[RMDB]
RNA sequence: GGGAACGACUCGAGUAGAGUCGAAAAGAUAUGGAGGAAGACCGUGGAGCUCCUGGAUCGGAAACGAUCCCUGAGCGAAGCGGUUCUUCCUCCUAAGUCUUGAAAGGGAAGGGUUCGCCCUUCCCAAUCUCAAAUUGUUGUUCGCAACAAUUUGAGAAAAAGAAACAACAACAACAAC
Reactivity to DMS in 0.01 (KOAc 150mM, MgCl2 10mM, bicine 150mM(pH8.5), 24C), signal-to-noise 4, nucleotides 027 to 126: g010a020u000a300u010g000g000a030g010g000a020a010g030a020c010c000g010u000g010g000a300g020c000u000c000c030u020g000g010a010u000c000g000g000a130a110a140c010g000a000u000c000c000c020u010g000a020g010c000g000a300a300g000c000g000g000u010u000c000u000u000c000c000u000c000c000u000a010a060g000u000c000u000u000g000a080a070a200g000g020g000a020a000g010g020g000u000u000c230g030c000c000c000u000u000c000c000c000a010a010

Structure probing data (DMS) for a 177-nucleotide construct. DMS adducts were read by reverse transcription with MarathonRT. Conditions: 150 mM KOAc, 10 mM MgCl2 and 150 mM bicine (pH 8.5), 24 C. The DMS profile rests on 3,500 reads. The data come from the RNA Mapping Database (RMDB), library TTRDES.